[RMDB]
RNA sequence: GGGAACGACUCGAGUAGAGUCGAAAAUAGAUUAGUGAAAUAGAGGUCGUCGGAUUCUGAUCAGAGAAUUUGACGAUUUGUCAACGCUAAAUACACUUGAGACGAUAGCGUUGACUAUCCGUCUCAAGAUAGUAAUCGGAUUCGUCUGGUUGCUAUCAAAAGAAACAACAACAACAAC
Reactivity to 2A3 in 0.01 (KOAc 150mM, MgCl2 10mM, bicine 150mM(pH8.5), 24C), signal-to-noise 9, nucleotides 027 to 126: u180a030g160a090u060u030a010g020u030g110a180a060a070u150a080g060a030g030g010u000c000g000u000c000g010g000a000u000u000c000u040g150a300u180c100a090g060a020g000a210a000u010u000u010g000a000c000g000a000u000u000u010g010u000c010a020a050c010g000c000u020a040a040a040u170a060c120a020c070u010u030g000a000g000a010c010g010a010u010a000g030c100g160u070u150g000a000c000u000a000u020c060c050g010u000c000u000c000a000a010
Reactivity to DMS in 0.01 (KOAc 150mM, MgCl2 10mM, bicine 150mM(pH8.5), 24C), signal-to-noise 9, nucleotides 027 to 126: u040a090g010a140u010u000a010g010u010g000a070a100a120u030a130g000a040g010g000u000c000g010u000c010g000g000a010u000u000c000u000g020a130u070c300a180g000a020g010a010a000u000u000u000g000a010c000g000a000u000u000u010g010u010c080a130a120c030g000c010u000a010a030a090u020a100c170a120c060u000u000g000a010g000a020c000g000a020u000a000g000c040g010u020u020g000a130c000u000a000u000c070c080g010u000c000u000c000a010a020